[RMDB]
RNA sequence: GGGAACGACUCGAGUAGAGUCGAAAAGGGGUCAUUAGCAACAGCGUGGUAGCGCGACGAUCUGUACUGAAGCCUCCACGGUACAGGGAGCGUUUCCACGACAUGCUAAUGACGGAGGCACCCAAAACGAACUACUUCUUUCGAGAAGUAGUUCGAAGAAGUUUUAAAAGUUCGCUUUUAAAACUUCAAAAGAAACAACAACAACAAC
Reactivity to 2A3 in 0.01 (KOAc 150mM, MgCl2 10mM, bicine 150mM(pH8.5), 24C), signal-to-noise 5, nucleotides 027 to 156: g010g010g130g010u000c010a000u000u000a000g010c070a080a170c140a170g030c000g000u010g000g010u040a010g000c000g000c000g070a300c000g000a030u000c000u000g000u000a000c000u030g040a090a020g000c010c000u000c000c000a010c000g000g000u000a000c000a010g000g000g000a000g000c000g000u010u010u000c000c000a000c000g000a030c000a070u300g000c000u000a000a000u000g000a000c020g000g000a000g000g000c010a020c010c000c010a030a070a020a040c020g000a000a000c000u010a000c000u010u010c010u030u140u130c210g100a020g000a010a000g000u000a000g000u000u000c000g000a000a010
Reactivity to DMS in 0.01 (KOAc 150mM, MgCl2 10mM, bicine 150mM(pH8.5), 24C), signal-to-noise 1, nucleotides 027 to 156: g000g060g000g010u040c010a020u000u000a060g030c010a090a170c100a120g010c010g030u000g000g020u000a010g030c000g000c000g000a120c180g010a080u020c000u000g010u000a020c020u000g000a020a170g000c020c000u010c000c010a290c000g010g000u000a020c000a030g030g000g030a030g030c020g030u000u000u000c000c010a050c010g020a080c010a140u010g000c000u000a000a030u000g030a030c000g040g000a020g190g040c000a200c000c000c020a060a070a130a210c020g010a010a020c000u000a010c010u000u000c000u000u000u000c280g000a050g000a010a020g010u000a010g000u000u000c000g040a010a080